RNA sequence: GGGAACGACUCGAGUAGAGUCGAAAAUGGUGAAACCCUGUCUCUACUAAAAAUUCAAAAAUUAGCCAGGUGUGGUGGUGCGCACCUGUAGUCCCAGCUACUCGGGAGGCUGAGGCAGAAGAAUCACUUGAACCCAAGAGGCAGAGGUUGCAGUGAGACAAUACGGGAUAUUCGUAUCCCGUAUUGUAAAAGAAACAACAACAACAAC
Reactivity to 2A3 in 0.01 (KOAc 150mM, MgCl2 10mM, bicine 150mM(pH8.5), 24C), signal-to-noise 3, nucleotides 027 to 156: u110g020g000u040g020a050a020a030c010c000c000u000g010u010c000u010c000u040a150c080u170a130a080a050a110a130u140u110c110a040a090a080a090a120u110u060a020g010c000c000a000g000g000u010g000u000g010g000u000g010g000u010g020c000g000c000a000c000c000u010g030u010a020g020u000c010c000c000a000g000c010u140a240c050u100c160g010g000g000a010g000g000c020u020g000a020g040g000c040a010g020a040a020g040a040a020u030c010a010c020u010u060g040a040a050c030c020c000a040a020g060a020g040g040c060a030g040a090g100g050u020u030g020c010a000g030u020g070a060g010
Reactivity to DMS in 0.01 (KOAc 150mM, MgCl2 10mM, bicine 150mM(pH8.5), 24C), signal-to-noise 2, nucleotides 027 to 156: u010g000g010u000g010a030a020a160c010c010c000u000g010u000c000u010c020u020a180c080u010a020a050a070a060a060u000u000c040a030a070a040a060a120u000u000a050g000c030c030a030g030g030u000g040u000g000g040u000g010g020u000g020c030g030c030a020c000c010u010g020u000a000g010u020c000c010c000a050g030c040u000a080c060u010c040g020g030g030a080g020g020c010u000g000a020g020g030c030a050g010a060a070g000a080a170u000c010a040c020u010u020g010a090a150c040c020c030a050a080g000a110g000g020c020a060g020a100g020g000u000u000g000c040a090g030u000g000a150g040